[RMDB]
RNA sequence: GGGAACGACUCGAGUAGAGUCGAAAACGUUUUCUGGGUCUUCGAAGCAGUUGCAAAGAAAUGCCCAGAUGGAGGACAGAGGGCCAAACCACCCCAGUGAAUUCAUAACAGGAGAUAACUUGCUUAAGAACAAUUAACCGUUCGCGGUUAAUUGUUCAAAAGAAACAACAACAACAAC
Reactivity to DMS in 0.01 (KOAc 150mM, MgCl2 10mM, bicine 150mM(pH8.5), 24C), signal-to-noise 2, nucleotides 027 to 126: c100g000u040u000u000u000c010u000g000g000g040u000c290u050u000c000g000a260a260g000c000a210g100u130u050g010c040a010a120a300g000a000a010a010u040g010c000c060c000a010g000a050u010g000g000a060g000g010a120c020a140g020a030g010g000g000c020c100a030a000a050c020c060a110c000c010c000c000a070g020u040g000a070a060u000u000c050a040u050a090a030c070a070g020g030a030g000a090u000a040a090c120u060u000g000c100u010u000a120a210
Reactivity to 2A3 in 0.01 (KOAc 150mM, MgCl2 10mM, bicine 150mM(pH8.5), 24C), signal-to-noise 4, nucleotides 027 to 126: c040g010u080u000u000u050c000u000g010g000g020u010c040u030u010c040g090a190a020g000c000a170g100u300u300g060c010a120a110a000g050a010a050a010u140g000c000c000c000a000g000a010u030g020g080a130g000g040a010c030a020g090a100g030g050g040c020c010a060a020a010c000c030a020c020c000c010c010a000g020u040g150a090a200u060u060c020a030u100a190a110c030a030g090g020a090g040a100u050a100a050c050u090u180g010c030u070u040a150a000